[RMDB]
RNA sequence: GGGAACGACUCGAGUAGAGUCGAAAAAGAAGGUGUACCCCAUUCAUACUGUGUGCUUUGAGAAGCCCCUUAUUAGGUACAGACACAUGCAUCUUCUGAUUUUAUCCUCUUAUAGGGAUGUUUAUUCAUGCCCAUUUCAAAGAUGGUGACACCAUGAAGUGGUCAGUAAUUUCGAUUACUGACCACUAAAAGAAACAACAACAACAAC
Reactivity to DMS in 0.01 (KOAc 150mM, MgCl2 10mM, bicine 150mM(pH8.5), 24C), signal-to-noise 3, nucleotides 027 to 156: a020g010a040a020g040g050u000g040u000a050c030c020c020c010a100u010u000c090a130u010a070c110u000g030u000g020u010g010c020u010u010u000g020a170g000a170a220g010c040c030c010c100u000u000a120u000u010a020g010g010u010a140c040a090g000a110c020a050c050a070u000g000c010a020u010c000u000u000c000u010g010a120u010u010u000u000a120u020c010c010u000c060u000u000a120u010a120g010g000g000a150u000g010u010u000u000a090u010u000c050a020u010g020c000c020c010a070u000u010u000c100a100a100a180g020a050u000g000g010u010g020a290c050a130c080c040a060u000g000a110
Reactivity to 2A3 in 0.01 (KOAc 150mM, MgCl2 10mM, bicine 150mM(pH8.5), 24C), signal-to-noise 3, nucleotides 027 to 156: a000g020a000a000g000g000u010g000u130a100c020c050c060c020a070u180u200c070a030u060a140c040u010g000u010g020u030g100c040u070u070u200g140a140g070a050a070g050c030c000c040c000u110u120a100u120u240a080g020g000u040a020c010a050g060a050c050a000c010a050u110g020c000a050u000c000u000u020c000u000g010a030u000u120u040u070a080u020c010c010u070c050u050u080a110u200a120g030g010g010a050u060g060u030u150u060a180u150u000c040a000u060g000c020c000c000a030u050u100u100c090a080a060a030g060a040u030g000g010u010g030a030c030a040c040c030a030u270g000a030
Structure probing data (DMS and 2A3) for a 207-nucleotide construct.
For DMS the reverse transcriptase was MarathonRT.
For 2A3, 1,389 sequencing reads were counted.